[RMDB]
RNA sequence: GGGAACGACUCGAGUAGAGUCGAAAACGGAAGUCAAAGUCGUAUGUGAUGUCCAUCUCAAGCCUGCCUUCAAUAGUUACGGAGGCAAAAUAUCUCACUCUAAAUAGCUUUGAAUCCUUCACAUUAGUGUAAAGUUCAUUAUUUAGAUUAACGGUUACCACUGCAUAAUAUUCGUAUUAUGCAGUGGAAAAGAAACAACAACAACAAC
Reactivity to DMS in 0.01 (KOAc 150mM, MgCl2 10mM, bicine 150mM(pH8.5), 24C), signal-to-noise 2, nucleotides 027 to 156: c070g010g000a070a060g030u000c000a030a170a160g000u010c080g000u000a060u030g010u010g020a000u000g020u000c010c000a210u010c060u000c020a150a170g010c020c030u000g010c030c000u000u000c020a070a120u000a150g030u000u010a080c180g010g010a020g030g060c000a050a020a040a140u000a090u000c020u000c070a140c270u000c020u000a020a020a000u000a010g000c120u000u000u000g000a000a040u000c060c020u000u000c020a010c010a160u000u010a140g020u000g010u000a020a040a040g030u000u010c000a070u000u000a010u020u000u000a050g000a060u000u000a050a120c100g000g000u000u000a160
Reactivity to 2A3 in 0.01 (KOAc 150mM, MgCl2 10mM, bicine 150mM(pH8.5), 24C), signal-to-noise 6, nucleotides 027 to 156: c050g030g020a060a010g050u090c040a080a090a020g060u100c090g030u120a110u180g080u050g020a030u070g060u060c030c020a120u010c050u020c050a040a070g030c000c030u030g030c030c000u030u000c020a130a220u120a240g170u140u120a100c110g010g000a010g000g000c000a020a020a000a000u090a030u000c080u030c020a040c030u020c000u010a030a000a010u040a030g070c070u120u050u060g000a020a020u100c010c000u080u100c020a010c020a130u170u290a110g020u020g050u100a050a100a030g020u010u000c020a030u030u030a020u010u030u050a020g000a010u020u150a090a010c050g060g020u100u190a010

An RNA of 207 nucleotides, treated with DMS and 2A3 and read out base by base.
Values cover nucleotides 27 to 156.
For 2A3 the reverse transcriptase was SuperScript II with manganese.
The 2A3 profile rests on 3,666 reads.
For DMS, 2,936 sequencing reads were counted.